[RMDB]
RNA sequence: GGGAACGACUCGAGUAGAGUCGAAAAGUGCGAUGCUGACGCGCUGUUGUUGCCCACCUGACAAUUGAGACGGGUAGGCGUCGUGCUUGUCGGCAAUACCGACCUUGUCCAGGAAAUCCAUUGCACGAAUAAUAGUAUCCUUCGGGAUACUAUUAUUAAAAGAAACAACAACAACAAC
Reactivity to 2A3 in 0.01 (KOAc 150mM, MgCl2 10mM, bicine 150mM(pH8.5), 24C), signal-to-noise 9, nucleotides 027 to 126: g010u000g000c010g010a020u030g010c030u040g020a030c040g020c020g000c160u030g020u060u040g020u020u050g030c000c020c000a030c000c010u040g020a030c030a120a190u170u220g060a110g030a100c030g050g000g000u030a030g040g000c010g020u020c010g010u020g020c020u060u050g020u020c000g000g000c010a020a040u050a130c010c030g030a050c020c020u090u120g040u020c040c030a030g010g080a060a110a030u060c050c030a060u050u090g030c060a020c080g060
Reactivity to DMS in 0.01 (KOAc 150mM, MgCl2 10mM, bicine 150mM(pH8.5), 24C), signal-to-noise 9, nucleotides 027 to 126: g010u000g000c000g010a030u000g010c060u010g010a100c070g000c060g000c030u000g000u010u010g010u000u000g000c020c010c030a070c020c010u000g010a080c060a080a070u030u040g010a130g020a100c030g000g000g010u000a110g000g010c020g010u000c020g010u010g000c030u010u010g000u000c010g000g000c070a100a120u030a170c030c020g000a050c040c080u010u010g000u010c030c040a090g010g000a070a080a090u020c070c030a050u010u010g010c030a040c070g010